[RMDB]
RNA sequence: GGGAACGACUCGAGUAGAGUCGAAAAAGCAGUUCAGCGUUGCGCCGAGUCGGCAACGGGGGCGUUACGGCCACCGGCGCUUGCAGUCGUGUCGUCAUGCCGCCGCCCGGCAGUCGAUGCCCGGCUGAUGUAUCAACCUCUUCGGAGGUUGAUACAUAAAAGAAACAACAACAACAAC
Reactivity to DMS in 0.01 (KOAc 150mM, MgCl2 10mM, bicine 150mM(pH8.5), 24C), signal-to-noise 2, nucleotides 027 to 126: a070g000c050a080g010u020u020c040a120g030c070g010u000u010g030c020g030c030c040g010a130g030u000c020g000g020c030a030a050c030g000g000g000g000g000c000g010u010u030a140c100g000g000c000c080a040c030c000g030g000c050g020c040u050u000g030c080a070g010u000c070g020u010g000u000c120g000u000c000a120u000g000c040c000g000c060c080g020c050c040c000g000g010c050a070g030u020c060g020a020u000g000c130c060c000g000g000c020u000g000
Reactivity to 2A3 in 0.01 (KOAc 150mM, MgCl2 10mM, bicine 150mM(pH8.5), 24C), signal-to-noise 3, nucleotides 027 to 126: a000g060c050a030g010u110u080c040a020g020c040g080u110u100g030c030g000c030c010g010a060g070u040c040g030g010c020a030a040c000g010g000g010g030g010c030g040u080u060a030c040g040g000c010c030a080c070c020g010g000c040g000c020u050u120g070c040a050g000u030c020g000u010g020u090c000g010u000c030a140u040g000c010c020g090c000c010g110c060c010c000g000g000c020a010g020u040c040g000a020u060g040c000c000c000g040g000c020u030g000